The record gives the reactivity of an RNA of 177 nucleotides to 2A3 and DMS. The DMS profile rests on 13,272 reads. Reactivities are rounded to 0.1 and cut off at 0 and 3.
[RMDB]
RNA sequence: GGGAACGACUCGAGUAGAGUCGAAAACGUUGCUCACAGCCACUCACGCGCUCGUCGUUGAUGCGCGCCGACGGCGAGUUGUGCAGCAUGUUGACUAACGACUACACCGAACAUAAUGCUGCGCCCAACCUACUAAUGACUUCGGUCAUUAGUAGGUAAAAGAAACAACAACAACAAC
Reactivity to 2A3 in 0.01 (KOAc 150mM, MgCl2 10mM, bicine 150mM(pH8.5), 24C), signal-to-noise 9, nucleotides 027 to 126: c020g040u030u090g010c010u020c020a030c020a020g040c030c020a050c030u060c010a040c050g080c000g000c000u010c010g030u000c010g000u000u020g030a060u120g010c020g010c020g000c020c010g020a010c000g000g020c040g000a020g000u140u290g040u050g020c010a010g010c030a040u050g050u030u060g080a100c070u080a150a030c020g050a020c030u110a050c070a040c060c040g080a120a030c030a050u160a120a040u120g030c040u020g000c010g020c000c020c000a020
Reactivity to DMS in 0.01 (KOAc 150mM, MgCl2 10mM, bicine 150mM(pH8.5), 24C), signal-to-noise 5, nucleotides 027 to 126: c090g000u000u000g000c040u000c030a020c050a090g020c030c040a090c090u010c040a080c130g010c050g010c000u000c000g010u000c020g000u010u000g020a080u000g000c030g000c040g010c050c020g020a040c110g000g010c010g000a050g010u000u030g020u010g010c080a010g000c010a040u000g000u000u010g020a120c100u020a100a080c070g000a100c090u020a100c110a120c060c030g010a090a080c090a060u020a150a070u030g010c020u010g000c050g020c000c070c040a150

Source: RMDB library OK1LIB, as collected in RNAgym. The RNA was probed in 150 mM KOAc, 10 mM MgCl2 and 150 mM bicine (pH 8.5) at 24 C. Reactivities are given for positions 27 through 126. 2A3 adducts were read by reverse transcription with SuperScript II with manganese.